[RMDB]
RNA sequence: GGGAACGACUCGAGUAGAGUCGAAAAGAUUACGUGUCGUUGUGGAAUCGAUACUACGCACGAGAUUCCAAGGUCUCUGGAGUACGUCCGCUGGUGACGUCUUUGGAGUCACGUUCGAUAUACGAAACGUAUCUAGUAGGUUCGCCUACUAGAUACGAAAAGAAACAACAACAACAAC
Reactivity to 2A3 in 0.01 (KOAc 150mM, MgCl2 10mM, bicine 150mM(pH8.5), 24C), signal-to-noise 6, nucleotides 027 to 126: g060a040u060u120a020c030g010u010g110u090c030g020u010u050g020u020g040g090a080a040u090c030g010a010u010a110c040u020a010c020g010c010a010c020g010a030g000a020u020u000c000c000a040a040g060g010u010c000u000c000u010g010g000a010g000u110a010c010g010u020c010c020g080c200u160g090g120u190g010a000c000g010u000c000u000u010u010g010g020a000g010u020c040a040c150g040u070u080c030g030a050u030a020u030a230c060g060a090a070a020
Reactivity to DMS in 0.01 (KOAc 150mM, MgCl2 10mM, bicine 150mM(pH8.5), 24C), signal-to-noise 5, nucleotides 027 to 126: g000a120u020u040a040c140g010u000g020u020c010g000u000u000g010u000g010g010a080a090u010c080g000a140u020a060c110u020a060c100g030c060a020c040g030a300g010a020u000u000c010c020a050a030g010g000u000c050u000c030u030g000g010a050g000u020a030c020g000u000c030c010g010c210u030g030g020u030g010a000c010g000u010c010u010u000u000g000g000a010g020u000c030a070c030g010u000u000c020g000a110u010a060u020a060c030g000a050a100a130